[RMDB]
RNA sequence: GGGAACGACUCGAGUAGAGUCGAAAAAAAGAUAUGGAUUGCGUCGAGUAUCUAGUGCGAUGAAAGGGUGUCGGAAACGACACCCUGGAGCACUUCUGAUACUAAGACAGCGCAAUCCUAAGUCAAACUUUAUACCUAAGUUCGCUUAGGUAUAAAGAAAAGAAACAACAACAACAAC
Reactivity to DMS in 0.01 (KOAc 150mM, MgCl2 10mM, bicine 150mM(pH8.5), 24C), signal-to-noise 3, nucleotides 027 to 126: a070a080a090g000a020u000a130u010g000g000a020u000u000g010c000g010u000c020g000a020g020u000a010u000c000u000a020g010u000g010c000g000a110u010g000a120a110a020g000g010g030u000g020u000c000g000g000a030a010a080c010g010a020c000a000c000c000c000u000g000g000a020g010c010a000c000u000u010c150u000g000a020u000a000c000u000a140a120g010a080c300a150g000c000g000c010a010a020u000c000c000u000a000a050g000u000c010a120a090a220
Reactivity to 2A3 in 0.01 (KOAc 150mM, MgCl2 10mM, bicine 150mM(pH8.5), 24C), signal-to-noise 3, nucleotides 027 to 126: a000a000a050g030a020u050a030u060g000g000a000u010u010g000c010g010u130c030g080a020g010u000a010u020c110u210a010g000u000g010c020g300a300u030g000a030a010a000g000g010g000u010g000u010c010g030g020a000a030a010c000g000a000c000a000c010c010c000u000g000g000a000g000c000a000c000u090u010c030u030g000a000u000a000c000u070a240a030g010a010c010a010g030c010g000c000a000a010u020c000c000u010a020a010g020u010c020a070a030a030